[RMDB]
RNA sequence: GGGAACGACUCGAGUAGAGUCGAAAAGCACACCACAGUGCCUGCUAUCACGGCAUUAUCGCCAGCGGUGCUGCCGUGAUGCGGUCUUCGCAAGGACCGCAACAUGAAGGUACGAUGCUUUUGUGUCCCUAAUUGGUCGUUUCGACGACCAAUUAGGAAAAGAAACAACAACAACAAC
Reactivity to DMS in 0.01 (KOAc 150mM, MgCl2 10mM, bicine 150mM(pH8.5), 24C), signal-to-noise 5, nucleotides 027 to 126: g000c000a030c110a120c210c150a160c230a170g010u000g020c010c000u010g020c030u010a110u000c020a000c000g000g020c000a010u000u010a000u010c020g000c100c220a210g010c020g010g010u000g010c070u000g000c010c000g000u000g030a000u000g010c000g000g000u000c000u020u010c300g020c300a170a120g000g000a010c000c000g020c010a110a050c170a040u000g010a070a030g020g000u010a000c010g010a100u010g000c020u000u000u000u000g010u010g020u010c020
Reactivity to 2A3 in 0.01 (KOAc 150mM, MgCl2 10mM, bicine 150mM(pH8.5), 24C), signal-to-noise 7, nucleotides 027 to 126: g010c010a020c010a020c080c030a070c060a070g010u010g010c000c010u040g050c030u060a010u050c000a010c020g000g000c000a000u040u030a020u030c020g050c100c070a120g160c040g040g000u020g000c000u000g000c000c000g010u000g000a020u040g000c000g000g000u010c020u120u080c110g100c150a080a100g020g000a010c000c000g000c010a020a030c070a070u150g060a050a000g000g000u020a010c030g050a080u040g010c020u030u020u040u040g140u030g050u060c000